[RMDB]
RNA sequence: GGGAACGACUCGAGUAGAGUCGAAAAUAGGUCGUGUUCGCACGACCUAAGAUAAAAUGCAUAAUAUGCCAGUAACCCGAAACACAAGGGAGUGCACCUGGCCUACGAUGUCGUUCGCGACAUCGAACUUUCCUGAUUCGUUCGCGAAUCAGGAAAGAAAAGAAACAACAACAACAAC
Reactivity to DMS in 0.01 (KOAc 150mM, MgCl2 10mM, bicine 150mM(pH8.5), 24C), signal-to-noise 1, nucleotides 027 to 126: u000a010g000g000u000c000g030u020g000u010u000c270g040c000a020c000g030a010c000c000u000a000a000g030a070u020a090a050a080a090u000g000c060a060u000a060a180u000a110u000g000c000c000a020g000u000a050a100c000c000c000g000a190a120a230c120a060c140a090a210g000g000g010a260g010u010g000c070a080c280c000u000g000g040c020c170u020a070c040g020a020u000g010u010c000g040u000u000c150g020c010g010a020c050a000u020c000g010a040a090
Reactivity to 2A3 in 0.01 (KOAc 150mM, MgCl2 10mM, bicine 150mM(pH8.5), 24C), signal-to-noise 2, nucleotides 027 to 126: u060a000g040g020u000c010g000u010g010u040u090c210g060c080a000c000g000a000c000c000u000a000a010g000a000u180a020a140a000a030u050g010c000a010u020a120a030u100a300u200g040c030c000a010g000u040a090a150c010c010c050g040a130a170a030c060a020c020a130a080g010g020g000a020g010u080g050c030a050c070c000u000g010g000c010c020u070a080c020g010a000u000g010u020c010g040u020u030c240g000c000g070a000c000a010u000c010g010a020a000
Source: RMDB library M2PK50, as collected in RNAgym. Structure probing data (DMS and 2A3) for a 177-nucleotide construct. The RNA was probed in 150 mM KOAc, 10 mM MgCl2 and 150 mM bicine (pH 8.5) at 24 C.